[RMDB]
Annotation: Chemical mapping of a 177-nucleotide RNA with DMS and 2A3.
RNA sequence: GGGAACGACUCGAGUAGAGUCGAAAAAAAAGAUAUGGACGAGGCUACCCACCUCACCAAGGCGAUGAAAUAUGGUCGGAAACGACCAUAUGGAGCCUUCCCUGAGAGGCCUCGUCCUAAGUCAAAAGUAUAGUAUCUACUUCGGUAGAUACUAUACAAAAGAAACAACAACAACAAC
Reactivity to DMS in 0.01 (KOAc 150mM, MgCl2 10mM, bicine 150mM(pH8.5), 24C), signal-to-noise 5, nucleotides 027 to 126: a050a050a110a110g010a050u010a040u000g010g000a020c010g030a010g000g030c000u000a100c040c040c080a300c030c000u010c000a000c050c180a020a020g010g030c010g000a100u000g020a140a070a010u000a010u000g000g010u000c000g000g000a020a020a060c000g010a020c010c000a010u000a000u010g000g000a040g010c000c000u000u000c060c060c050u000g000a030g000a130g010g000c000c010u000c010g000u000c000c000u000a000a030g010u010c040a070a090a100a150
Reactivity to 2A3 in 0.01 (KOAc 150mM, MgCl2 10mM, bicine 150mM(pH8.5), 24C), signal-to-noise 2, nucleotides 027 to 126: a000a000a000a020g060a060u070a030u090g000g010a000c000g000a000g020g000c010u070a130c050c080c040a050c000c010u010c000a000c060c040a010a000g000g000c020g300a300u010g000a020a010a000u000a010u000g000g000u010c000g010g000a030a020a000c010g000a010c010c010a000u000a000u000g000g000a000g010c000c000u010u000c000c000c010u010g000a000g000a010g010g000c000c000u000c000g010u030c000c000u000a000a000g010u010c020a000a030a140a040

For DMS, 6,530 sequencing reads were counted. Conditions: 150 mM KOAc, 10 mM MgCl2 and 150 mM bicine (pH 8.5), 24 C. Reactivities are given for positions 27 through 126. For 2A3 the reverse transcriptase was SuperScript II with manganese.